[RMDB]
RNA sequence: GGGAACGACUCGAGUAGAGUCGAAAAGAUAUGGAGCCUAGUUGCAUACUGCCAUCGAUCUCGGAAACGAGGGAGGCAGGUAUGGCACUCUAGGCUCCUAAGUCAAACUGAGGGUUCGCCCUCAGAACGCGUAAGUAGGGUUCGCCCUACUUACGCGAAAAGAAACAACAACAACAAC
Reactivity to 2A3 in 0.01 (KOAc 150mM, MgCl2 10mM, bicine 150mM(pH8.5), 24C), signal-to-noise 1, nucleotides 027 to 126: g010a010u080a050u170g000g010a020g000c010c000u000a010g010u000u030g000c000a000u030a050c000u020g000c040c000a230u300c050g010a080u000c020u000c010g000g020a150a100a050c020g000a000g040g010g000a030g000g000c020a000g000g070u060a030u100g220g050c020a040c020u050c010u000a000g000g010c000u000c000c000u010a000a000g010u010c000a000a020a060c020u000g020a000g000g000g020u070u180c290g200c070c000c000u000c000a000g010a040a030
Reactivity to DMS in 0.01 (KOAc 150mM, MgCl2 10mM, bicine 150mM(pH8.5), 24C), signal-to-noise 2, nucleotides 027 to 126: g000a000u000a300u000g020g000a000g020c000c000u000a000g000u010u000g050c000a040u000a020c000u000g000c000c000a250u010c230g010a070u010c000u000c000g050g000a110a120a270c010g030a030g000g010g000a000g050g010c000a000g000g000u010a010u010g010g000c020a020c120u030c000u000a020g000g010c000u000c000c000u000a000a030g000u000c030a090a160a300c000u000g000a000g000g090g010u000u010c160g030c010c010c010u000c000a010g000a120a090